[RMDB]
RNA sequence: GGGAACGACUCGAGUAGAGUCGAAAAGAUAUGGACUCGUUGAAAGGGAGCGAAACUGUCGGAAACGACAGCACUCGCGAAGAACUGGAGAGUCCUAAGUCAAAAGUCUUUAGUUCGCUAAAGACAACUUAAGGGACUGGUUCGCCAGUCCCUUAAGAAAAGAAACAACAACAACAAC
Reactivity to DMS in 0.01 (KOAc 150mM, MgCl2 10mM, bicine 150mM(pH8.5), 24C), signal-to-noise 1, nucleotides 027 to 126: g000a060u030a300u000g000g000a000c000u000c010g000u000u010g010a110a170a000g000g000g000a050g030c010g000a010a040a180c010u020g000u000c000g000g010a140a080a180c000g020a010c010a020g030c050a020c300u000c000g010c020g010a050a140g000a160a110c000u020g000g000a110g000a050g030u000c000c000u000a030a060g000u010c030a070a200a120a180g000u000c020u010u000u000a020g010u000u020c230g040c000u040a000a020a020g010a020c010a050a030